[RMDB]
Background: An RNA of 207 nucleotides, treated with 2A3 and DMS and read out base by base. For DMS, 4,393 sequencing reads were counted. Reactivities are given for positions 27 through 156. It was measured as part of the RMDB library OK3TST. DMS adducts were read by reverse transcription with MarathonRT.
RNA sequence: GGGAACGACUCGAGUAGAGUCGAAAAGAUUAUGUGGGAGAUGCGCCCUGUCGUGUCACUGGAAACAGAAUUGCGAGUCGCUCGCACUAGCGAUAUUGAUGUGUACAGUAGCGUACACUGUGCUACUUUAAGGUAUAAUGACGAUACCACGUCAAAACGUCCUAUAUAGCUUCGGCUAUAUAGGACGAAAAGAAACAACAACAACAAC
Reactivity to 2A3 in 0.01 (KOAc 150mM, MgCl2 10mM, bicine 150mM(pH8.5), 24C), signal-to-noise 5, nucleotides 027 to 156: g050a030u150u110a070u170g070u080g030g030g010a080g000a070u050g010c010g020c020c020c010u040g080u100c040g000u020g030u030c010a030c050u020g000g060a070a070a030c030a030g070a160a140u080u140g020c020g010a020g040u050c030g010c040u010c020g020c040a040c070u030a000g000c010g020a020u030a060u130u180g100a110u060g020u010g000u020a010c020a040g090u120a020g080c040g030u020a040c030a010c050u030g030u050g000c020u040a070c030u060u080u130a090a040g030g010u070a070u060a200a140u120g010a000c010g000a000u030a090c000c020a020c010g000u000c010a000a000a000a080
Reactivity to DMS in 0.01 (KOAc 150mM, MgCl2 10mM, bicine 150mM(pH8.5), 24C), signal-to-noise 2, nucleotides 027 to 156: g020a120u000u000a050u000g010u020g040g050g000a140g000a110u000g020c020g020c030c090c010u030g000u020c030g020u000g050u010c030a110c050u010g010g000a120a100a260c050a110g030a060a140u010u020g050c020g010a090g040u010c070g030c050u000c060g050c030a090c060u000a080g030c030g000a090u000a070u000u020g000a040u010g020u000g030u010a060c070a100g010u000a080g020c030g000u000a100c020a090c010u000g030u010g000c030u000a100c050u010u020u000a080a100g040g010u000a050u010a070a100u010g030a060c030g010a100u010a090c020c030a050c060g000u000c040a040a010a060a160